RNA sequence: GGGAACGACUCGAGUAGAGUCGAAAAGGAGGACGAAGCAUAUUUCUGUUUCUGGAGGAUUAUUUAUAAUCUGCCGGAAAGUCUUGCAGGUGGCUGGGAUAUGUUCAGUCUGGUAGAAUUAAUCACGAAAACGUGUCCUUGUUCGCAAGGACACGAAUCUUUAUCUGCUCUUCGGAGCAGAUAAAGAAAAAGAAACAACAACAACAAC
Reactivity to 2A3 in 0.01 (KOAc 150mM, MgCl2 10mM, bicine 150mM(pH8.5), 24C), signal-to-noise 1, nucleotides 027 to 156: g060g060a050g010g000a010c010g020a020a000g080c050a030u050a010u070u050u060c030u050g150u010u030u000c010u010g000g040a080g010g010a010u000u000a000u040u170u090a100u070a010a000u030c000u080g140c020c000g020g010a010a020a030g010u040c050u090u110g050c000a010g060g070u010g030g030c000u010g000g050g000a010u000a010u010g090u110u070c050a000g000u040c050u080g000g040u070a030g080a080a030u130u070a110a020u060c080a040c160g070a050a130a030a000c000g000u000g000u000c000c000u030u010g030u070u020c120g000c080a010a000g020g020a020c000a010c000g000a000a000
Reactivity to DMS in 0.01 (KOAc 150mM, MgCl2 10mM, bicine 150mM(pH8.5), 24C), signal-to-noise 1, nucleotides 027 to 156: g010g000a250g000g020a080c020g020a140a190g000c060a030u000a040u000u000u010c020u000g000u000u010u000c010u010g010g010a050g000g000a040u010u000a010u010u010u010a060u000a090a030u000c010u000g020c010c010g040g000a020a020a010g030u010c000u000u000g050c050a150g000g060u000g030g010c100u000g040g020g000a040u010a060u010g020u000u000c080a290g020u010c030u000g040g030u000a140g000a090a110u000u030a000a110u000c050a110c070g000a070a050a120a120c030g000u000g040u000c010c000u000u000g000u010u000c300g000c050a010a000g020g000a010c010a010c010g010a020a030
Notes
Chemical mapping of a 207-nucleotide RNA with 2A3 and DMS. Conditions: 150 mM KOAc, 10 mM MgCl2 and 150 mM bicine (pH 8.5), 24 C. Reactivities are given for positions 27 through 156. For 2A3 the reverse transcriptase was SuperScript II with manganese.